[RMDB]
RNA sequence: GGGAACGACUCGAGUAGAGUCGAAAACGUAUUUUGGGUGGGCCCCAACAUACUACUGGGCUCAUUGGGUUCAUCGGGCGGGUGAUCUCACCACUUCUCCCACCAGGGCUCUCCCCCUACACUCGGGGUCUAGUUAAAGGUUCGCCUUUAACUAGACAAAAGAAACAACAACAACAAC
Reactivity to 2A3 in 0.01 (KOAc 150mM, MgCl2 10mM, bicine 150mM(pH8.5), 24C), signal-to-noise 4, nucleotides 027 to 126: c020g020u060a090u030u100u040u060g040g010g010u100g030g080g110c030c020c020c010a040a010c000a060u120a050c020u020a080c080u100g030g040g000c010u030c050a070u030u120g030g000g010u150u140c040a110u160c220g010g050g040c100g060g000g000u030g050a070u050c070u030c080a040c040c010a040c030u160u060c030u030c010c000c000a020c010c030a030g020g020g000c010u020c010u030c000c020c000c000c000u030a030c060a020c030u020c020g020g000g030
Reactivity to DMS in 0.01 (KOAc 150mM, MgCl2 10mM, bicine 150mM(pH8.5), 24C), signal-to-noise 5, nucleotides 027 to 126: c160g010u000a080u010u010u010u000g000g010g010u010g010g010g020c110c010c010c070a040a080c110a070u000a060c090u010a120c170u000g000g020g000c040u000c020a110u020u010g020g000g010u000u000c110a090u000c100g010g000g020c200g000g020g010u010g010a090u010c080u010c070a090c080c020a070c060u010u010c040u010c010c000c010a100c120c050a090g010g000g010c010u000c030u000c020c000c000c030c040u000a090c110a080c100u000c080g000g000g010
The record gives the reactivity of an RNA of 177 nucleotides to 2A3 and DMS. 2A3 is a SHAPE reagent: it acylates the 2'-hydroxyl of flexible nucleotides of all four kinds. The RNA was probed in 150 mM KOAc, 10 mM MgCl2 and 150 mM bicine (pH 8.5) at 24 C. Source: RMDB library OK2TRN, as collected in RNAgym.